[RMDB]
RNA sequence: GGGAACGACUCGAGUAGAGUCGAAAACUCAAAGAAGAACUUUUCCCAGAUGCAGCGAAUGGCUUCCGCAUCAAAGAAACUGAACCUGGAUUCGUUGUAUUCCGGAAAUCAGUUGAUCAAAAUGUCAUCUUACGAGUACAUUCGUGUACUCGUAAGAAAAAGAAACAACAACAACAAC
Reactivity to 2A3 in 0.01 (KOAc 150mM, MgCl2 10mM, bicine 150mM(pH8.5), 24C), signal-to-noise 3, nucleotides 027 to 126: c040u050c030a210a180a000g160a040a000g020a100a070c010u020u020u030u080c020c010c000a000g010a020u030g000c040a030g050c050g170a280a110u180g100g030c050u090u010c080c010g020c030a010u010c040a030a070a020g030a020a020a000c010u070g010a040a090c010c010u060g000g030a020u050u000c050g070u190u190g030u080a020u000u000c010c010g030g010a030a020a040u000c010a000g000u000u030g060a080u080c060a030a060a180a070u140g110u130c040a040
Reactivity to DMS in 0.01 (KOAc 150mM, MgCl2 10mM, bicine 150mM(pH8.5), 24C), signal-to-noise 4, nucleotides 027 to 126: c020u010c050a070a090a180g000a100a070g000a080a090c110u000u020u000u000c010c000c030a190g010a010u000g000c010a050g020c110g020a060a070u010g020g010c090u000u010c040c110g000c030a020u000c040a090a120a100g000a090a020a040c000u000g010a020a120c110c010u000g030g010a020u000u000c030g000u000u020g000u010a040u000u010c000c020g000g000a060a090a070u000c020a000g010u000u000g000a130u010c150a050a050a070a070u000g020u000c080a090
An RNA of 177 nucleotides, treated with 2A3 and DMS and read out base by base. Source: RMDB library OK2TST, as collected in RNAgym. Conditions: 150 mM KOAc, 10 mM MgCl2 and 150 mM bicine (pH 8.5), 24 C. 2A3 adducts were read by reverse transcription with SuperScript II with manganese. DMS adducts were read by reverse transcription with MarathonRT. Reactivities are rounded to 0.1 and cut off at 0 and 3. The DMS profile rests on 3,158 reads.